[RMDB]
Overview
Source: RMDB library OK2TST, as collected in RNAgym. This 177-nucleotide RNA was probed chemically with DMS and 2A3. The reactions ran in a buffer of 150 mM KOAc, 10 mM MgCl2 and 150 mM bicine (pH 8.5), at 24 C.
RNA sequence: GGGAACGACUCGAGUAGAGUCGAAAAUAUGCGUAGGGUAGUAAAUUCAUAUGCAGAGGAGUUAGAAGUAUCUGCUAUUGCUACCUUUGUGAAAAAUGUUCUAGAAGCACGCUAUUUAGAAAAAAGACGGAUAAGUAGGUUUCGACCUACUUAUCCGAAAAGAAACAACAACAACAAC
Reactivity to DMS in 0.01 (KOAc 150mM, MgCl2 10mM, bicine 150mM(pH8.5), 24C), signal-to-noise 1, nucleotides 027 to 126: u000a040u010g020c000g010u010a080g020g000g000u000a000g010u000a000a060a170u020u020c150a060u010a080u010g010c020a010g010a010g010g000a230g000u030u010a080g020a130a180g020u010a080u000c010u000g000c010u000a050u000u000g010c010u000a020c000c000u010u000u000g030u000g010a030a110a080a080a080u000g000u020u020c060u010a180g030a060a050g020c130a020c070g020c000u010a050u000u000u020a120g000a000a010a090a060a100a150g000a200
Reactivity to 2A3 in 0.01 (KOAc 150mM, MgCl2 10mM, bicine 150mM(pH8.5), 24C), signal-to-noise 1, nucleotides 027 to 126: u110a050u130g030c010g030u030a050g000g030g030u000a000g030u010a030a090a140u140u230c080a000u120a030u300g000c000a000g050a020g080g030a150g120u040u300a110g170a300a010g050u060a020u080c000u020g000c010u050a060u040u020g000c010u000a000c000c060u000u020u040g020u000g050a040a000a000a000a000u060g000u040u040c030u030a060g020a100a040g070c000a000c010g010c000u010a070u060u060u050a080g030a000a080a050a030a030a030g140a070